[RMDB]
RNA sequence: GGGAACGACUCGAGUAGAGUCGAAAAUACGGGUAAAAUCUGAACCACAAUGGGCCAUGGGCUCCAACCGGGAAAGGGACAAUGGGCGCCACAAGGGAAUAUGUAUCGGGUUCCCCUCCCCUUGGGCAUUUGCACUACAUUUCGAUGUAGUGCAAAUAAAAGAAACAACAACAACAAC
Reactivity to 2A3 in 0.01 (KOAc 150mM, MgCl2 10mM, bicine 150mM(pH8.5), 24C), signal-to-noise 2, nucleotides 027 to 126: u060a010c030g000g000g040u020a000a040a040a150u050c070u100g050a040a060c030c000a030c050a060a160u100g040g020g000c020c100a130u080g130g010g000c050u030c040c020a080a060c070c020g040g040g000a060a110a010g040g020g000a010c050a080a090u060g040g020g050c030g000c010c030a120c010a090a020g050g040g040a060a020u090a070u300g090u050a130u160c060g050g050g050u000u000c020c000c010c000u000c020c000c000c020u000u030g040g000g000c000
Reactivity to DMS in 0.01 (KOAc 150mM, MgCl2 10mM, bicine 150mM(pH8.5), 24C), signal-to-noise 5, nucleotides 027 to 126: u020a080c080g000g000g010u000a060a050a120a080u010c050u000g010a090a120c040c040a080c140a100a110u000g010g000g010c040c040a120u010g030g000g010c040u000c040c060a050a090c120c080g010g010g000a070a090a050g000g010g000a090c100a080a090u010g000g020g000c160g000c020c020a030c050a040a050g000g000g000a060a080u000a060u000g000u000a090u020c120g020g000g000u010u000c010c000c010c050u000c040c000c000c020u010u000g010g000g010c120
The record gives the reactivity of an RNA of 177 nucleotides to 2A3 and DMS. DMS adducts were read by reverse transcription with MarathonRT. The data come from the RNA Mapping Database (RMDB), library OK2TST. Conditions: 150 mM KOAc, 10 mM MgCl2 and 150 mM bicine (pH 8.5), 24 C. The 2A3 profile rests on 2,221 reads.